RNA sequence: GGGAACGACUCGAGUAGAGUCGAAAAACAUAGUUUGGCCGACGUCAUACCAUUGAAGACGAUUCGUUAAAGACACCAGCUCGUCUUAUAGGAGCCCAUUUAGCAAAAACAGUCCUGUAGGAACCAAUCCACUAUAUGUCUUCGGACAUAUAGUGGAAAAAGAAACAACAACAACAAC
Reactivity to 2A3 in 0.01 (KOAc 150mM, MgCl2 10mM, bicine 150mM(pH8.5), 24C), signal-to-noise 2, nucleotides 027 to 126: a000c040a080u200a080g090u040u040u090g070g010c060c030g040a040c050g050u010c010a020u070a140c050c040a100u020u210g110a100a020g060a000c020g040a130u080u100c010g040u060u150a080a040a060g050a020c030a020c040c010a040g030c020u020c040g070u000c020u050u040a040u020a080g030g000a020g050c010c050c010a030u070u050u010a060g000c010a050a030a050a000a060c010a020g110u000c020c020u050g020u030a030g060g000a020a010c000c010a020a080
Reactivity to DMS in 0.01 (KOAc 150mM, MgCl2 10mM, bicine 150mM(pH8.5), 24C), signal-to-noise 2, nucleotides 027 to 126: a090c080a060u000a070g000u010u000u000g010g040c050c060g000a090c030g010u010c030a080u010a100c070c050a120u000u000g010a060a080g010a050c050g010a100u000u010c070g000u000u000a060a060a190g000a080c100a040c050c050a020g030c080u000c050g000u000c010u000u000a090u010a070g000g000a060g000c050c040c040a040u000u000u020a050g000c070a050a080a020a080a080c090a050g010u000c010c030u000g010u000a050g000g000a060a080c120c120a040a190

An RNA of 177 nucleotides, treated with 2A3 and DMS and read out base by base.
The 2A3 profile rests on 1,117 reads.
Conditions: 150 mM KOAc, 10 mM MgCl2 and 150 mM bicine (pH 8.5), 24 C.